[RMDB]
RNA sequence: GGGAACGACUCGAGUAGAGUCGAAAAGAUAUGGACCACUACCCACCCUUGUAGCGCGUUGAAAUCGGAAACGAUGGAGCGUGAGGAGGAGGUGGUCCUAAGUCAAACCACGGGUUCGCCCGUGGAACUAUGUUAGCGACUUCGGUCGCUAACAUAGAAAAGAAACAACAACAACAAC
Reactivity to 2A3 in 0.01 (KOAc 150mM, MgCl2 10mM, bicine 150mM(pH8.5), 24C), signal-to-noise 2, nucleotides 027 to 126: g110a080u190a140u280g000g000a000c000c000a030c010u160a270c040c030c030a030c010c000c020u010u110g090u080a030g010c020g050c100g220u300u100g040a030a030a010u040c010g000g000a100a030a040c030g000a000u010g000g040a020g000c030g000u030g020a060g140g000a020g000g030a040g000g000u000g000g010u000c000c000u010a000a000g070u020c090a090a080a110c000c000a000c020g000g010g010u050u070c300g080c110c000c000g020u000g000g000a010a010
Reactivity to DMS in 0.01 (KOAc 150mM, MgCl2 10mM, bicine 150mM(pH8.5), 24C), signal-to-noise 2, nucleotides 027 to 126: g000a130u000a170u000g000g000a020c000c000a010c000u000a110c000c010c010a300c130c000c030u000u010g010u010a300g000c000g000c010g020u000u070g010a060a110a010u000c000g000g010a100a060a050c020g020a030u000g000g000a120g020c010g000u010g000a180g010g000a020g020g040a200g010g000u000g000g000u000c000c000u000a000a020g000u000c100a120a080a170c000c000a000c000g000g000g020u000u010c250g040c000c000c010g070u000g000g000a050a070
An RNA of 177 nucleotides, treated with 2A3 and DMS and read out base by base. DMS adducts were read by reverse transcription with MarathonRT. The DMS profile rests on 1,440 reads.